RNA sequence: GGGAACGACUCGAGUAGAGUCGAAAAUAGAGAAAGAAGACAAGGAGGAUAAUGGCCUUAGGCACAAUUGGACCCGAGGGCUCUAACGAGGUCAGAAGACCAGUGUCUCAUUUUUCUUGGCAUUGCUGGGCUUUGUUUACUUCUAGACUGCCUUCAAUAGCUAUCAGCUAUUCGUAGCUGAUAGCUAAAAAGAAACAACAACAACAAC
Reactivity to DMS in 0.01 (KOAc 150mM, MgCl2 10mM, bicine 150mM(pH8.5), 24C), signal-to-noise 2, nucleotides 027 to 156: u000a110g000a170g010a080a090a100g030a100a040g020a050c010a050a060g010g010a170g050g010a110u010a100a100u010g010g010c020c030u000u000a060g030g030c000a040c040a050a160u000u010g030g000a090c040c030c030g000a080g030g000g050c030u010c040u020a050a150c050g000a060g050g000u000c050a090g010a060a120g000a040c020c010a050g020u000g020u000c020u030c030a090u000u020u010u010u010c050u010u010g040g020c040a140u000u000g010c010u000g000g020g000c060u000u010u020g000u000u000u000a070c040u010u020c040u000a100g000a060c060u010g020c050c000u000u000c030a070a200
Reactivity to 2A3 in 0.01 (KOAc 150mM, MgCl2 10mM, bicine 150mM(pH8.5), 24C), signal-to-noise 2, nucleotides 027 to 156: u130a010g060a000g010a010a090a010g050a050a000g000a020c020a040a000g030g000a020g010g050a080u090a070a100u160g020g020c030c030u070u090a050g020g010c020a050c020a090a150u120u080g030g010a040c000c010c020g010a050g060g000g000c000u010c010u030a080a040c040g030a010g010g030u060c080a020g040a060a000g030a050c000c000a010g020u030g020u030c010u030c070a140u070u090u040u110u100c100u090u070g040g000c000a060u010u170g060c000u040g020g000g000c000u000u040u040g050u020u070u060a070c010u000u000c000u000a050g030a120c060u120g060c020c000u040u060c030a060a120

An RNA of 207 nucleotides, treated with DMS and 2A3 and read out base by base. Reactivities are given for positions 27 through 156. The data come from the RNA Mapping Database (RMDB), library OK3TST. The RNA was probed in 150 mM KOAc, 10 mM MgCl2 and 150 mM bicine (pH 8.5) at 24 C.